RNA sequence: GGGAACGACUCGAGUAGAGUCGAAAAUGAACUUGUUGACAGUGACCAGAGAGCUAGACUUUUAACUGCCUCAGCUGCCCAUCAGUGACCCAUUGUCAGAGGUUAGGGUGCUAAUGGAAUUGGGGGGGUGGGGAUAAUGAACUGCCUUCUCUUUAGCGGUGCUGAUAAUAUUCGUAUUAUCAGCACCAAAAGAAACAACAACAACAAC
Reactivity to 2A3 in 0.01 (KOAc 150mM, MgCl2 10mM, bicine 150mM(pH8.5), 24C), signal-to-noise 1, nucleotides 027 to 156: u060g040a050a000c040u000u030g050u120u070g250a020c000a030g000u000g040a080c060c060a080g050a010g020a010g020c100u160a030g130a140c080u040u070u030u150a090a070c010u170g030c010c000u090c020a000g000c000u000g020c000c000c000a200u120c000a000g080u050g010a090c010c030c000a000u050u070g070u060c040a040g000a030g140g000u080u120a010g000g010g060u100g010c010u060a070a070u120g020g120a050a120u070u170g000g010g030g010g000g000g040u030g020g000g010g000a040u210a120a060u130g080a080a000c040u000g000c000c000u120u020c030u000c000u100u120u110a090g000c130